[RMDB]
RNA sequence: GGGAACGACUCGAGUAGAGUCGAAAAGACGUGGAGGUGUCGCGCCCUCCUUUGCGCGUAAGUACGUCGAAAUUCGGUGCUAUGGAUCGCACCGUUUGAUCCAUUAGAUAUCCGCUCUGUGCCGCGGUUGGGCAUUUACACUUACCCGAAAGGGGAAGCAUGGUACUAGCUUCGGCUAGUACCAUGCAAAAGAAACAACAACAACAAC
Reactivity to 2A3 in 0.01 (KOAc 150mM, MgCl2 10mM, bicine 150mM(pH8.5), 24C), signal-to-noise 2, nucleotides 027 to 156: g000a030c040g010u040g010g020a020g000g000u010g050u040c000g000c000g000c050c000c070u040c030c030u090u150u130g030c090g000c010g070u060a060a100g010u000a060c020g010u010c020g030a020a110a030u070u050c000g000g010u010g020c040u020a060u110g180g000a120u000c010g010c040a190c090c040g000u030u000u120g010a010u010c030c000a020u000u110a030g140a130u050a090u180c040c040g000c000u020c020u030g090u020g070c060c000g040c020g030g000u160u070g000g000g000c020a010u070u000u040a030c050a000c010u040u090a050c030c030c030g040a040a010a010g000g040g000g000a020a010
Reactivity to DMS in 0.01 (KOAc 150mM, MgCl2 10mM, bicine 150mM(pH8.5), 24C), signal-to-noise 1, nucleotides 027 to 156: g020a080c030g030u010g010g060a070g010g000u000g020u000c170g000c140g060c090c030c000u000c040c000u000u000u000g010c070g060c030g000u010a080a150g010u000a040c050g180u000c060g010a060a050a080u000u010c000g040g030u040g030c000u000a300u020g010g000a230u010c080g000c070a250c040c030g060u000u010u020g000a120u010c010c020a070u020u000a060g010a240u000a060u010c010c030g000c050u000c030u010g020u000g080c030c070g030c110g130g030u010u010g020g030g030c030a120u040u010u000a100c110a090c010u010u010a190c000c000c000g010a110a150a140g040g000g010g010a060a120
Record summary
Structure probing data (2A3 and DMS) for a 207-nucleotide construct. For 2A3 the reverse transcriptase was SuperScript II with manganese. For DMS, 1,510 sequencing reads were counted. The RNA was probed in 150 mM KOAc, 10 mM MgCl2 and 150 mM bicine (pH 8.5) at 24 C.